Description:
An RNA of 177 nucleotides, treated with 2A3 and read out base by base. The reactions ran in a buffer of 150 mM KOAc, 10 mM MgCl2 and 150 mM bicine (pH 8.5), at 24 C. As a SHAPE reagent, 2A3 marks flexible, mostly unpaired nucleotides at the ribose 2'-OH. Values cover nucleotides 27 to 126.
RNA sequence: GGGAACGACUCGAGUAGAGUCGAAAAUUCUAAUUUGAUAUUGUUAAGGAGGGAUUCGUUUAUUUCAAUAAGCUCCCAUGGCUUUCCAAUAUCCAUCCAUUCCUUUUCGGUCUUAUGGCCUUUUACACCACCCUGCGUCAUUCGUGACGCAGGGUGGAAAAGAAACAACAACAACAAC
Reactivity to 2A3 in 0.01 (KOAc 150mM, MgCl2 10mM, bicine 150mM(pH8.5), 24C), signal-to-noise 2, nucleotides 027 to 126: u130u010c020u020a020a090u110u030u110g000a000u000a080u030u000g000u000u010a020a000g070g000a110g050g020g000a070u040u220c080g110u020u020u010a080u000u200u190c170a300a040u010a040a010g050c000u000c000c000c000a070u100g110g030c020u000u000u010c000c000a000a000u000a000u000c030c060a030u010c000c000a040u020u060c040c000u050u020u050u070c020g010g040u000c180u050u300a250u300g020g030c030c000u060u000u060u130a110c080a000